[RMDB]
RNA sequence: GGGAACGACUCGAGUAGAGUCGAAAAUGUCCACAGGUAUGACUAAGCAGACUGUGAAGCCAGGUCAUUUUAAUCAGGAGUUUUAUGAGUUCCUCAAGGGCAAGGGAUUUUUCAAUGAGGGUUCAAGAUAAUUCUCCACAUUCGUGUGGAGAAUUAUAAAAGAAACAACAACAACAAC
Reactivity to 2A3 in 0.01 (KOAc 150mM, MgCl2 10mM, bicine 150mM(pH8.5), 24C), signal-to-noise 1, nucleotides 027 to 126: u100g060u040c020c020a030c030a030g100g120u300a090u120g070a120c040u040a040a000g100c010a040g070a190c090u030g030u060g170a020a020g000c000c030a030g010g030u070c000a070u070u240u110u180a080a140u040c010a000g140g000a070g030u070u020u000u100a100u130g100a060g030u040u080c000c010u000c040a000a130g030g000g000c010a010a000g210g000g020a010u160u050u000u070u110c060a080a050u170g040a130g080g030g000u040u070c010a030a000g000
Reactivity to DMS in 0.01 (KOAc 150mM, MgCl2 10mM, bicine 150mM(pH8.5), 24C), signal-to-noise 2, nucleotides 027 to 126: u010g010u000c010c000a080c120a090g030g020u000a060u000g000a100c070u000a100a100g030c030a070g010a160c060u010g010u000g000a110a100g000c050c060a110g010g010u000c020a020u000u010u010u010a040a140u010c110a070g020g000a160g000u020u000u000u010a090u020g000a120g000u000u000c010c000u010c100a050a090g000g010g020c080a060a030g000g000g000a030u010u010u010u010u000c090a040a100u000g000a050g010g000g000u000u000c100a060a040g000

The record gives the reactivity of an RNA of 177 nucleotides to 2A3 and DMS. For 2A3 the reverse transcriptase was SuperScript II with manganese. The reactions ran in a buffer of 150 mM KOAc, 10 mM MgCl2 and 150 mM bicine (pH 8.5), at 24 C. For DMS, 1,799 sequencing reads were counted. The data come from the RNA Mapping Database (RMDB), library OK2TST. Reactivities are given for positions 27 through 126.